[RMDB]
RNA sequence: GGGAACGACUCGAGUAGAGUCGAAAAGAUAUGGACAUCCGCGAUCGAUAAGCUCCAUUCGGAAACGAAUGAGAGCUUUUGACGAUCCUGGAUGUCCUAAGUCAAAACCCUCGGUUCGCCGAGGGAAGGAAAGCUUAAGGUUCGCCUUAAGCUUUCCAAAAGAAACAACAACAACAAC
Reactivity to 2A3 in 0.01 (KOAc 150mM, MgCl2 10mM, bicine 150mM(pH8.5), 24C), signal-to-noise 1, nucleotides 027 to 126: g000a000u040a020u090g010g020a000c000a010u000c010c030g060c110g010a010u000c020g090a080u030a260a000g010c000u000c000c010a000u000u000c020g010g010a080a000a020c070g030a010a050u110g060a140g000a010g300c010u010u000u010u020g000a000c000g020a000u000c020c010u000g040g000a000u000g010u030c000c000u000a000a010g000u030c000a030a020a050a160c000c000c000u000c000g020g010u110u080c300g040c150c010g040a000g000g010g010a010a010
Reactivity to DMS in 0.01 (KOAc 150mM, MgCl2 10mM, bicine 150mM(pH8.5), 24C), signal-to-noise 3, nucleotides 027 to 126: g010a000u000a300u010g020g000a020c000a000u000c010c010g060c300g030a000u000c010g010a260u000a010a020g020c040u010c010c010a030u000u010c000g000g000a090a110a110c000g010a010a000u000g010a130g010a000g020c000u000u000u000u000g020a140c240g010a010u020c000c050u000g000g010a020u000g010u000c000c000u000a000a100g010u000c010a090a050a120a220c000c000c000u000c000g030g000u000u000c260g020c000c000g010a010g000g010g010a010a020
Structure probing data (2A3 and DMS) for a 177-nucleotide construct. For 2A3 the reverse transcriptase was SuperScript II with manganese. Values cover nucleotides 27 to 126. The RNA was probed in 150 mM KOAc, 10 mM MgCl2 and 150 mM bicine (pH 8.5) at 24 C. Source: RMDB library TTRDES, as collected in RNAgym.